This 177-nucleotide RNA was probed chemically with DMS and 2A3.
RNA sequence: GGGAACGACUCGAGUAGAGUCGAAAAUCUGUCACUGAGCCAACAAGAAGCCAUUGAGAAACACCUGGAUUUUGACAGCCGCUGUGCUCUGCUAGCACUGUUUGCACAGGCCACGCUCUCUGAACACGACACUAUACAAAUUCGUUUGUAUAGUGUCAAAAGAAACAACAACAACAAC
Reactivity to DMS in 0.01 (KOAc 150mM, MgCl2 10mM, bicine 150mM(pH8.5), 24C), signal-to-noise 9, nucleotides 027 to 126: u010c040u010g010u000c030a070c070u000g010a120g020c050c040a070a090c090a090a090g010a110a100g010c040c030a050u000u000g000a100g010a100a070a090c080a040c040c030u000g010g010a110u000u000u010u000g010a070c060a050g010c070c080g020c070u010g010u000g010c020u000c080u000g010c070u000a070g010c050a100c050u000g000u000u000u000g010c090a050c050a050g010g010c030c030a050c100g000c050u000c020u000c040u000g010a010a090c210a130c220
Reactivity to 2A3 in 0.01 (KOAc 150mM, MgCl2 10mM, bicine 150mM(pH8.5), 24C), signal-to-noise 8, nucleotides 027 to 126: u020c010u030g070u040c010a020c070u040g030a020g040c020c020a060a060c030a100a070g090a080a010g030c010c020a060u070u110g060a050g060a110a090a010c030a020c010c020u040g060g050a130u070u060u030u160g090a040c020a020g030c020c030g030c030u040g020u030g050c010u030c060u150g040c030u050a020g010c020a020c080u020g050u060u060u060g010c050a040c000a030g030g000c020c000a020c030g020c000u000c000u000c020u050g040a040a020c090a010c160
The data come from the RNA Mapping Database (RMDB), library OK2TRN. For DMS, 20,929 sequencing reads were counted. The 2A3 profile rests on 19,623 reads.